[RMDB]
RNA sequence: GGGAACGACUCGAGUAGAGUCGAAAAGAUAUGGAGUCCUGAGCUUUUGACGGAGUGACCAUCGGAAACGAUGGCGCUCCGAUAAGCUCCUGACUCCUAAGUCAAAAGGCUCCCUUCGGGGAGCCAAUCAUAGGUUGUUCUUCGGAACAACCUAUGAAAAAGAAACAACAACAACAAC
Reactivity to 2A3 in 0.01 (KOAc 150mM, MgCl2 10mM, bicine 150mM(pH8.5), 24C), signal-to-noise 1, nucleotides 027 to 126: g000a020u020a030u130g000g000a010g000u000c000c070u030g000a000g050c040u300u140u300u300g290a210c210g000g000a000g000u020g150a300c000c000a020u020c010g080g030a060a050a000c010g000a000u000g000g000c010g030c000u000c000c000g000a000u020a000a000g000c000u000c000c010u000g000a000c000u010c000c000u020a080a000g000u000c010a150a130a060a130g020g000c000u010c000c010c000u000u030c230g060g000g000g030a010g000c000c000a010a010
Reactivity to DMS in 0.01 (KOAc 150mM, MgCl2 10mM, bicine 150mM(pH8.5), 24C), signal-to-noise 2, nucleotides 027 to 126: g010a030u010a300u010g000g000a000g000u000c000c040u000g020a020g000c010u010u020u000u010g020a280c150g010g010a010g060u000g000a230c010c020a040u000c000g040g010a090a080a120c010g000a010u000g000g010c020g000c010u000c000c000g000a020u000a000a000g000c000u010c000c020u000g010a030c000u010c000c000u010a000a090g000u000c010a130a160a230a130g030g010c000u010c000c010c000u000u020c140g030g000g010g000a010g000c010c010a000a030

Chemical mapping of a 177-nucleotide RNA with 2A3 and DMS.
The RNA was probed in 150 mM KOAc, 10 mM MgCl2 and 150 mM bicine (pH 8.5) at 24 C.
For 2A3, 1,905 sequencing reads were counted.
Values cover nucleotides 27 to 126.
2A3 adducts were read by reverse transcription with SuperScript II with manganese.